[RMDB]
RNA sequence: GGGAACGACUCGAGUAGAGUCGAAAAGAUAUGGACGGUGACAUGCCUCCGGAUCGGAAACGAUCCGAGGCAACAGCACCAGUCCUAAGUCAAAACGCUUGACUACAGUUCGCUGUAGUCAAGCGAACCCACUUAAUUCCUUCGGGAAUUAAGUGGGAAAAGAAACAACAACAACAAC
Reactivity to DMS in 0.01 (KOAc 150mM, MgCl2 10mM, bicine 150mM(pH8.5), 24C), signal-to-noise 1, nucleotides 027 to 126: g000a020u000a300u000g000g010a040c000g000g000u000g000a030c040a220u010g000c000c000u000c080c110g010g000a000u000c010g000g000a100a100a220c010g020a010u000c000c000g000a010g000g010c010a000a010c270a140g010c000a000c000c000a090g000u010c000c000u000a010a040g000u000c020a130a050a130a180c000g000c010u000u020g020a000c000u000a000c010a030g010u010u010c220g040c000u010g000u000a000g020u000c000a000a020g010c000g030a010a020
Reactivity to 2A3 in 0.01 (KOAc 150mM, MgCl2 10mM, bicine 150mM(pH8.5), 24C), signal-to-noise 2, nucleotides 027 to 126: g000a020u060a010u090g020g000a000c020g000g000u020g020a080c040a170u050g020c000c030u030c170c080g000g000a010u020c000g050g000a060a020a040c000g020a010u000c010c000g000a000g010g010c010a000a020c030a020g050c000a000c020c120a040g010u000c000c000u030a080a040g080u010c050a030a060a030a090c030g010c000u030u000g030a000c010u000a000c010a030g060u040u120c190g150c190u000g010u030a020g000u000c000a010a010g020c000g000a000a000